[RMDB]
Chemical mapping of a 207-nucleotide RNA with DMS and 2A3.
The reactions ran in a buffer of 150 mM KOAc, 10 mM MgCl2 and 150 mM bicine (pH 8.5), at 24 C.

RNA sequence: GGGAACGACUCGAGUAGAGUCGAAAAGGCCACAGAGGUCCCCACACUCUGGUUCUCGAGCAGGUGAGGAGGAGGCACUCUGCUUCCCUUCCACAGGUCAUCGUGGAGAUGACCUGUCCUCACCUAGGCAGAGCUGGGCUGUCACUGCCUGCUGCAGCUCUGAGUCUGUAUUCGUACAGACUCAGAGAAAAGAAACAACAACAACAAC
Reactivity to DMS in 0.01 (KOAc 150mM, MgCl2 10mM, bicine 150mM(pH8.5), 24C), signal-to-noise 1, nucleotides 027 to 156: g010g030c040c040a100c060a100g010a180g010g010u010c040c010c000c030a180c090a090c020u010c010u000g040g010u000u010c020u000c020g000a150g050c100a040g030g000u010g010a040g010g020a150g000g000a040g010g030c010a150c130u000c150u010g030c010u000u000c010c000c040u000u010c060c140a110c010a020g000g030u000c010a010u000c000g030u010g000g030a300g090a010u000g000a010c000c000u000g000u000c000c010u000c020a020c010c010u020a000g020g000c100a060g000a050g010c060u000g020g010g000c030u000g030u030c020a130c050u010g020c020c010u000g010c030u000g010c060a130g010
Reactivity to 2A3 in 0.01 (KOAc 150mM, MgCl2 10mM, bicine 150mM(pH8.5), 24C), signal-to-noise 4, nucleotides 027 to 156: g030g000c030c010a040c070a090g100a070g050g020u070c000c020c030c000a020c010a020c010u060c010u020g040g080u120u040c040u030c040g090a060g040c040a000g000g000u000g010a000g000g030a040g010g000a000g000g000c020a040c170u300c160u170g010c010u020u000c020c000c020u070u090c040c020a010c000a000g000g000u000c010a000u000c010g050u120g170g300a120g000a040u010g010a000c000c000u000g000u000c000c000u000c000a000c000c000u010a010g030g000c050a000g000a010g010c010u060g010g040g000c040u060g020u170c060a030c120u060g000c000c010u110g030c060u100g010c040a020g030